Conditions: 150 mM KOAc, 10 mM MgCl2 and 150 mM bicine (pH 8.5), 24 C. Chemical mapping of a 177-nucleotide RNA with 2A3 and DMS. For 2A3 the reverse transcriptase was SuperScript II with manganese. For DMS, 7,041 sequencing reads were counted. DMS adducts were read by reverse transcription with MarathonRT.
RNA sequence: GGGAACGACUCGAGUAGAGUCGAAAACGGCGAGGCCGCCCGGGACGCCAAGUUGAUCAACGGGGCGGUCAACGAUUUGGCGCUGAUCACCGGGCAGAAGCCGGAAGUCCGCCGGGCGCGCAAGUCCAAUCAAUUGAUCAUUCGUGAUCAAUUGAUUAAAAGAAACAACAACAACAAC
Reactivity to 2A3 in 0.01 (KOAc 150mM, MgCl2 10mM, bicine 150mM(pH8.5), 24C), signal-to-noise 2, nucleotides 027 to 126: c000g020g000c030g080a050g120g080c050c030g000c000c010c000g000g000g010a020c020g000c020c000a030a030g020u010u010g010a030u030c010a040a120c070g030g010g060g020c040g000g020u010c000a000a010c020g070a060u100u010u070g020g010c000g000c090u090g060a070u080c040a040c210c010g030g020g000c020a020g030a030a010g030c000c000g010g020a020a010g030u020c020c010g010c030c020g030g000g020c040g000c010g000c050a080a020g020u010c010c000
Reactivity to DMS in 0.01 (KOAc 150mM, MgCl2 10mM, bicine 150mM(pH8.5), 24C), signal-to-noise 5, nucleotides 027 to 126: c060g010g010c010g010a180g020g030c090c090g010c010c000c010g000g000g020a110c020g000c010c010a030a060g000u000u000g000a020u000c020a110a130c140g000g010g010g020c300g000g000u000c010a010a010c010g010a180u000u010u000g000g010c010g010c160u010g010a090u000c150a190c000c000g000g000g000c010a030g000a080a230g000c010c000g000g000a080a110g020u000c050c060g010c050c030g000g010g010c030g000c080g010c090a070a100g010u000c040c040